[RMDB]
RNA sequence: GGGAACGACUCGAGUAGAGUCGAAAAUGUGAAGUCACAGGACUCGCUGUUUCUGAUCACUUACUCCAACAUGCAGCAGACAGUGGUACAAGCGUCUUUGGCGGACCGGUACCCUUCGCUAAAGAAACAUUAUUAGCCUGUUCGCAGGCUAAUAAUGAAAAGAAACAACAACAACAAC
Reactivity to DMS in 0.01 (KOAc 150mM, MgCl2 10mM, bicine 150mM(pH8.5), 24C), signal-to-noise 6, nucleotides 027 to 126: u000g010u000g010a220a060g000u000c030a050c050a070g000g010a160c130u000c130g010c030u000g000u000u000u000c020u000g010a140u000c030a050c050u000u000a140c090u000c020c040a080a110c150a090u000g000c140a040g000c030a060g020a040c220a040g020u000g010g000u010a030c050a050a130g020c220g010u000c010u000u000u010g010g020c110g010g010a030c030c030g000g000u000a030c020c010c040u000u000c030g010c020u000a030a080a090g010a100a090a150
Reactivity to 2A3 in 0.01 (KOAc 150mM, MgCl2 10mM, bicine 150mM(pH8.5), 24C), signal-to-noise 5, nucleotides 027 to 126: u100g000u000g030a040a020g020u030c020a010c010a060g020g170a290c090u070c160g150c050u030g020u010u030u010c030u020g070a070u040c020a010c040u040u150a040c020u030c030c010a050a030c020a120u180g010c050a020g000c020a020g030a100c040a030g030u070g140g000u040a020c030a060a160g040c070g120u020c000u080u090u120g200g050c070g010g000a010c000c010g020g010u020a020c000c000c000u010u030c010g000c020u030a030a090a030g120a040a060a000

Annotation:
Conditions: 150 mM KOAc, 10 mM MgCl2 and 150 mM bicine (pH 8.5), 24 C. The record gives the reactivity of an RNA of 177 nucleotides to DMS and 2A3. The 2A3 profile rests on 5,934 reads.